[RMDB]
RNA sequence: GGGAACGACUCGAGUAGAGUCGAAAAGUGAUAUCAAUUCGUUGAUAUCACGGUAUGCGUACUACGCUGGAGCUCUGACCUACCCACCUCCCAAAUAGGAGAGGGUCUGAGCGAUGAAGGCGUAUCGCUAAUAGUAGUGGAAUUCGUUCCACUACAACACCGCAAAGCAUUUCGAUGCUUUGCGGUGAAAAGAAACAACAACAACAAC
Reactivity to 2A3 in 0.01 (KOAc 150mM, MgCl2 10mM, bicine 150mM(pH8.5), 24C), signal-to-noise 3, nucleotides 027 to 156: g010u000g010a010u000a000u000c030a020a030u120u150c300g080u130u030g000a000u000a000u000c000a000c000g000g030u220a090u150g010c010g020u050a180c050u000a020c040g000c050u010g000g000a000g020c000u020c020u030g020a010c010c000u200a290c170c030c000a050c020c000u050c000c020c010a200a250a260u150a160g010g000a000g000a010g000g000g000u030c010u000g010a000g000c020g070a170u020g020a000a000g010g020c000g000u000a010u250c010g010c020u020a050a040u110a250g000u000a000g010u000g010g050a010a050u110u070c050g040u090u000c010c000a000c000u000a000c000a000a010
Reactivity to DMS in 0.01 (KOAc 150mM, MgCl2 10mM, bicine 150mM(pH8.5), 24C), signal-to-noise 1, nucleotides 027 to 156: g000u020g010a040u000a010u010c010a000a060u000u010c300g020u000u000g000a050u000a000u000c000a000c000g020g010u000a050u010g030c020g060u000a240c060u010a060c000g020c080u000g000g000a200g060c020u010c000u000g000a010c000c030u000a050c060c040c030a300c180c000u010c000c030c020a030a190a300u000a050g000g030a000g050a240g120g020g000u000c040u000g000a030g010c000g010a070u000g000a030a150g000g000c000g000u010a010u000c040g020c050u000a050a080u000a200g080u000a020g050u000g020g010a000a080u000u050c300g020u000u000c050c000a130c000u000a000c000a050a210

Source: RMDB library RNAMAK, as collected in RNAgym.
The record gives the reactivity of an RNA of 207 nucleotides to 2A3 and DMS.
For DMS the reverse transcriptase was MarathonRT.